[RMDB]
RNA sequence: GGGAACGACUCGAGUAGAGUCGAAAAUCAGCUGCUUCCUCUUGUUCUUGAGGGCCUUCCUUCGUCGGUGAUCCUGCCUCUCCCUGUCGGUGAAUCCUCCCCUGAGAGGCCUCUUCCUAGGUCCGGAAUCUAUCUCCAUCUGGUCUGUUCGGGCCCUGAUAUAGUAAUGCUUCGGCAUUACUAUAUCAAAAGAAACAACAACAACAAC
Reactivity to DMS in 0.01 (KOAc 150mM, MgCl2 10mM, bicine 150mM(pH8.5), 24C), signal-to-noise 1, nucleotides 027 to 156: u000c000a150g040c040u010g050c040u010u000c030c000u000c010u000u000g020u010u000c040u010u000g000a130g040g010g040c060c040u000u000c020c020u000u000c070g040u000c070g020g010u010g000a110u000c040c000u000g000c040c020u000c050u010c010c060c010u000g000u000c070g030g000u000g000a080a130u010c030c010u000c020c010c020c050u000g000a100g000a110g030g030c020c040u000c050u010u000c060c040u000a090g020g030u010c020c000g000g000a070a080u000c060u010a070u000c020u000c020c040a110u000c080u010g010g030u000c050u010g010u000u000c040g050g020g020c020c020c070u000
Reactivity to 2A3 in 0.01 (KOAc 150mM, MgCl2 10mM, bicine 150mM(pH8.5), 24C), signal-to-noise 3, nucleotides 027 to 156: u130c010a000g050c020u060g010c000u070u030c010c010u030c000u060u130g060u120u080c050u090u110g020a080g000g020g010c010c030u050u060c020c010u050u120c060g080u020c050g000g090u040g030a070u040c010c020u040g010c000c000u030c010u010c030c030c020u050g120u140c070g000g030u110g140a100a160u100c010c010u040c000c030c020c000u030g030a060g000a020g090g000c000c010u030c020u040u040c000c020u020a010g030g000u000c030c000g000g030a030a030u030c030u080a070u070c060u060c050c010a090u030c060u090g030g030u020c040u040g050u030u030c010g000g010g000c000c040c010u010